Background: Conditions: 150 mM KOAc, 10 mM MgCl2 and 150 mM bicine (pH 8.5), 24 C. The record gives the reactivity of an RNA of 207 nucleotides to 2A3. For 2A3, 666 sequencing reads were counted.
[RMDB]
RNA sequence: GGGAACGACUCGAGUAGAGUCGAAAAGGGGUCUUAUCCGCACCCUUGGAUUUAGAGGUACACUGAAGCCUCCACGGUGUACUACCCACCUUGUCAGGGUGCGUGAUAAGACGGAGGCACCCAAAUCAGUACUCAAGCUUCGGCUUGAGUACUGAAAUCUAAGUCUAGGCUUCGGCCUAGACUUAGAAAAAGAAACAACAACAACAAC
Reactivity to 2A3 in 0.01 (KOAc 150mM, MgCl2 10mM, bicine 150mM(pH8.5), 24C), signal-to-noise 1, nucleotides 027 to 156: g070g010g000g000u030c000u000u000a000u000c000c000g050c000a000c000c010c080u070u080g110g010a110u170u230u280a160g020a050g100g010u030a010c000a000c000u020g010a090a000g040c020c000u020c030c000a040c020g010g020u020g000u040a010c020u060a070c020c040c050a110c040c070u200u250g160u250c200a100g020g000g000u000g000c000g000u040g010a000u000a000a000g010a000c000g000g000a000g020g000c040a010c020c020c020a030a110a000u040c000a000g020u000a000c000u000c000a000a000g010c000u000u300c300g100g000c000u000u010g000a000g000u000a000c000u000g020a000a000a000